RNA sequence: GGGAACGACUCGAGUAGAGUCGAAAAGUGUCGAAGAUCGAAGCUACCCUUUCCCGGAGUCCGGUAGCGAGAUCGAGAUACGAGAGGACGACGGGUAUCGGAUGACGUGUAAGCUUUACCCGUCCCGCUUACACGUUAUCCGUGAGGGACGGGAUGACACUACUCAUUAUUUCGAUAAUGAGUAGUGAAAAGAAACAACAACAACAAC
Reactivity to 2A3 in 0.01 (KOAc 150mM, MgCl2 10mM, bicine 150mM(pH8.5), 24C), signal-to-noise 5, nucleotides 027 to 156: g020u020g000u020c020g070a140a030g000a020u010c010g060a100a010g000c000u000a010c010c000c010u020u080u090c070c040c040g050g050a060g030u110c130c070g000g000u000a000g000c010g000a000g000a010u000c000g000a010g000a020u030a020c030g010a030g010a020g080g020a030c070g010a010c040g030g000g040u080a070u160c010g020g000a030u060g020a010c010g000u000g000u000a000a010g000c030u160u150u250a180c040c020c020g080u080c020c020c000g000c000u000u000a000c000a000c000g000u000u020a020u010c000c000g010u030g010a030g010g010g020a020c060g000g010g000a010u060g010a010
Reactivity to DMS in 0.01 (KOAc 150mM, MgCl2 10mM, bicine 150mM(pH8.5), 24C), signal-to-noise 4, nucleotides 027 to 156: g000u010g010u000c010g000a200a240g010a050u010c030g010a240a300g000c020u000a010c000c000c080u010u000u000c030c070c090g000g000a210g030u000c070c040g010g050u000a010g010c020g010a300g010a040u000c010g000a300g000a090u000a030c020g010a130g020a170g010g020a120c080g010a140c020g000g000g000u010a090u000c020g000g020a030u010g010a020c020g030u000g010u000a020a030g020c020u000u000u000a130c090c040c080g000u010c040c030c050g030c000u000u000a010c000a000c020g030u000u010a030u010c010c000g020u000g010a070g000g000g000a140c070g000g010g000a270u010g010a230
About this RNA:
Chemical mapping of a 207-nucleotide RNA with 2A3 and DMS. For 2A3, 7,853 sequencing reads were counted. Reactivities are given for positions 27 through 156. DMS (dimethyl sulfate) methylates the pairing face of unpaired adenines and cytosines.